Annotation
Chemical mapping of a 177-nucleotide RNA with 2A3 and DMS. 2A3 adducts were read by reverse transcription with SuperScript II with manganese. The data come from the RNA Mapping Database (RMDB), library OK2TST.

RNA sequence: GGGAACGACUCGAGUAGAGUCGAAAAUAGCGGACUUCAUGGGAUCGCCUGCCAUGAACCUUCUGCCCGUCAAGGUGGAGAAGAGCGGUUCGGAUUAUGCCAUUACGCUCGAUCAGGGCGAGGGCGAAUGAGGGAUGAUGUUCGCAUCAUCCCUCAUAAAAGAAACAACAACAACAAC
Reactivity to 2A3 in 0.01 (KOAc 150mM, MgCl2 10mM, bicine 150mM(pH8.5), 24C), signal-to-noise 2, nucleotides 027 to 126: u070a010g050c000g000g020a000c010u000u030c030a040u020g010g000g050a050u050c010g010c000c010u020g000c000c000a020u020g010a020a020c000c010u070u060c010u120g080c000c010c020g030u060c130a110a110g030g080u090g040g130a030g000a110a000g010a020g020c100g050g000u060u080c060g030g040a070u110u120a100u280g100c000c010a020u090u070a040c010g000c010u000c040g040a160u100c120a080g000g030g020c020g050a100g000g000g020c010g020a010
Reactivity to DMS in 0.01 (KOAc 150mM, MgCl2 10mM, bicine 150mM(pH8.5), 24C), signal-to-noise 3, nucleotides 027 to 126: u000a080g020c030g010g000a050c070u010u020c010a030u000g010g000g010a060u000c000g000c010c010u010g010c010c020a010u010g010a030a300c130c040u000u010c010u000g020c000c030c000g000u010c300a130a080g000g020u000g010g000a050g020a090a070g010a080g000c120g020g000u000u000c090g020g010a090u010u000a080u010g030c010c010a120u000u020a090c030g000c000u000c020g010a160u020c160a070g020g000g020c020g000a070g020g030g010c010g010a070